[RMDB]
RNA sequence: GGGAACGACUCGAGUAGAGUCGAAAAGAUAUGGAGAUAUCCACACAGGUCUAAGACAGUCGGAAACGAUCGAGACCGUGUGGAGUAUCUCCUAAGUCAAACCUCUCACCGUUCGCGGUGAGAGGAAGAAAAAAUUAACGUUCGCGUUAAUUUUUUCAAAAGAAACAACAACAACAAC
Reactivity to 2A3 in 0.01 (KOAc 150mM, MgCl2 10mM, bicine 150mM(pH8.5), 24C), signal-to-noise 1, nucleotides 027 to 126: g030a030u090a050u160g000g000a000g000a030u000a010u000c020c020a010c020a010c000a170g020g000u050c020u050a140a010g120a120c080a030g050u020c020g060g070a110a060a070c010g000a040u070c040g080a010g020a030c010c010g050u000g000u010g010g000a000g010u010a010u030c010u020c010c000u010a040a000g000u020c050a020a000a160c000c000u010c000u000c000a000c000c010g050u140u130c270g020c030g150g000u000g000a010g000a010g000g000a030a040
Reactivity to DMS in 0.01 (KOAc 150mM, MgCl2 10mM, bicine 150mM(pH8.5), 24C), signal-to-noise 2, nucleotides 027 to 126: g000a060u020a300u020g010g000a060g020a040u000a010u000c010c000a000c020a000c000a160g050g020u010c020u000a190a090g030a100c300a120g010u010c020g010g010a150a070a140c020g020a020u000c030g000a000g000a030c020c000g010u000g010u000g020g000a000g010u000a000u000c010u010c010c000u000a000a030g000u000c000a100a130a200c000c010u000c010u000c000a000c000c000g020u020u010c220g020c000g000g010u000g000a000g020a000g000g000a010a020

The record gives the reactivity of an RNA of 177 nucleotides to 2A3 and DMS. 2A3 is a SHAPE reagent: it acylates the 2'-hydroxyl of flexible nucleotides of all four kinds. Reactivities are rounded to 0.1 and cut off at 0 and 3. For 2A3, 1,659 sequencing reads were counted. It was measured as part of the RMDB library TTRDEL. For 2A3 the reverse transcriptase was SuperScript II with manganese. The reactions ran in a buffer of 150 mM KOAc, 10 mM MgCl2 and 150 mM bicine (pH 8.5), at 24 C.